[RMDB]
RNA sequence: GGGAACGACUCGAGUAGAGUCGAAAAUAAAUUUGCUUAUCUGAGGCAACAUUGUCACUUAUCUAUCAAGUUCAGAACAGUGGAAGGCUAAGUUGGCCUCGGGCAAUGUCAAACCUGAAGAUGAUAAAUCGAUAUAGGUGUUCGCACCUAUAUCGAUAAAAGAAACAACAACAACAAC
Reactivity to DMS in 0.01 (KOAc 150mM, MgCl2 10mM, bicine 150mM(pH8.5), 24C), signal-to-noise 3, nucleotides 027 to 126: u030a080a080a120u010u000u010g010c020u000u010a080u020c020u000g010a040g000g000c100a070a020c010a040u010u000g000u000c020a090c060u020u030a210u020c040u010a100u040c120a150a130g010u010u010c210a080g010a050a040c120a070g000u000g010g010a100a090g000g010c060u000a020a060g020u000u010g000g000c010c000u000c040g000g000g000c020a010a010u020g010u050c070a040a090a100c030c020u000g000a090a170g010a050u010g000a080u030a040a080
Reactivity to 2A3 in 0.01 (KOAc 150mM, MgCl2 10mM, bicine 150mM(pH8.5), 24C), signal-to-noise 7, nucleotides 027 to 126: u130a000a060a030u050u030u050g040c030u130u130a110u150c050u080g020a000g000g000c010a000a000c010a070u070u080g070u050c010a010c160u090u080a030u070c030u010a110u140c060a180a100g050u160u090c050a070g050a180a090c010a050g060u070g030g100a150a080g040g000c050u110a110a070g080u040u090g190g100c000c000u000c000g000g000g000c020a000a010u030g080u150c050a030a040a110c000c040u060g070a070a050g040a060u180g020a040u170a170a180